[RMDB]
RNA sequence: GGGAACGACUCGAGUAGAGUCGAAAACAAAGAGGUUGAGGAAGAUGAGUAAGAAACCUAUGCCUGUUGACUUUCAGCUCUUGAAAAUCGCUACUGCUACAGACCACUAUACACUAAAGAAACUUGGAGAAACACCUCCAAUGUAUGAGAACUCAUAUCCCUUAAUGUAGUUCGCUACAUUAAGGGAAAAAGAAACAACAACAACAAC
Reactivity to DMS in 0.01 (KOAc 150mM, MgCl2 10mM, bicine 150mM(pH8.5), 24C), signal-to-noise 2, nucleotides 027 to 156: c060a050a170a120g030a080g030g060u000u000g000a070g000g010a090a050g010a060u000g020a090g020u000a090a180g010a090a070a070c040c030u000a080u010g030c050c030u000g010u000u010g020a110c070u000u000u000c020a090g000c030u000c050u000u000g000a090a080a030a070u000c030g000c070u000a070c020u000g020c050u000a050c040a050g040a060c030c020a040c070u000a080u000a070c070a140c060u000a040a090a180g040a150a060a100c080u000u000g000g030a060g000a140a050a130c050a080c090c020u020c020c010a030a040u000g010u010a070u000g010a090g000a020a130c000u020c020a050u000a200
Reactivity to 2A3 in 0.01 (KOAc 150mM, MgCl2 10mM, bicine 150mM(pH8.5), 24C), signal-to-noise 2, nucleotides 027 to 156: c020a000a110a040g040a020g020g010u030u050g000a000g000g030a000a060g020a030u050g010a000g030u040a080a050g070a070a020a020c030c020u040a060u080g020c010c000u000g000u030u010g040a080c030u040u040u010c030a010g000c020u050c020u090u070g040a150a060a010a040u070c030g010c050u030a010c010u020g050c000u020a010c160a020g020a010c000c210a010c010u050a050u070a060c060a030c040u170a100a100a000g070a120a090a020c050u000u000g000g000a010g010a010a200a000c070a020c030c030u000c000c010a010a030u150g020u030a010u060g080a060g210a040a000c010u030c060a000u100a040